[RMDB]
RNA sequence: GGGAACGACUCGAGUAGAGUCGAAAAGCGCGCCUCCGCGGCUCCAAUUUAUUUCGGGGCAGUUCUUGCCCGGGGAGGAUACUUAAUGCUCGGGUCCGCGCAGCAGAGUCAGUCCUCCCAGAGCCCGCAAUUAGUCCGAAUUCGUUCGGACUAAUUGAAAAGAAACAACAACAACAAC
Reactivity to 2A3 in 0.01 (KOAc 150mM, MgCl2 10mM, bicine 150mM(pH8.5), 24C), signal-to-noise 8, nucleotides 027 to 126: g030c020g000c000g040c010c010u040c020c020g020c060g030g000c000u000c010c010a080a050u110u260u160a210u060u150u180c090g010g000g010g010c010a010g040u110u100c090u160u060g010c010c010c000g000g000g000g000a010g010g000a010u040a030c010u060u120a180a050u090g010c000u020c020g060g040g160u080c100c050g080c010g010c040a000g010c010a010g010a010g060u050c050a020g060u000c010c000u000c000c000c000a000g000a000g010c000c010c010g030
Reactivity to DMS in 0.01 (KOAc 150mM, MgCl2 10mM, bicine 150mM(pH8.5), 24C), signal-to-noise 4, nucleotides 027 to 126: g020c080g000c070g010c040c020u010c080c060g000c090g010g000c030u000c010c060a070a070u020u030u040a060u020u010u020c110g010g020g000g010c010a060g000u020u020c080u030u000g010c000c010c010g020g010g000g010a010g010g020a030u010a060c030u020u000a070a110u000g000c000u000c030g000g010g010u030c090c070g010c050g010c090a030g010c070a100g000a030g000u000c170a080g010u000c010c000u000c010c000c000a040g000a070g010c010c000c060g010
Overview:
This 177-nucleotide RNA was probed chemically with 2A3 and DMS. Reactivities are given for positions 27 through 126. It was measured as part of the RMDB libraries RFM100 and RFMREP. DMS adducts were read by reverse transcription with MarathonRT. 2A3 adducts were read by reverse transcription with SuperScript II with manganese.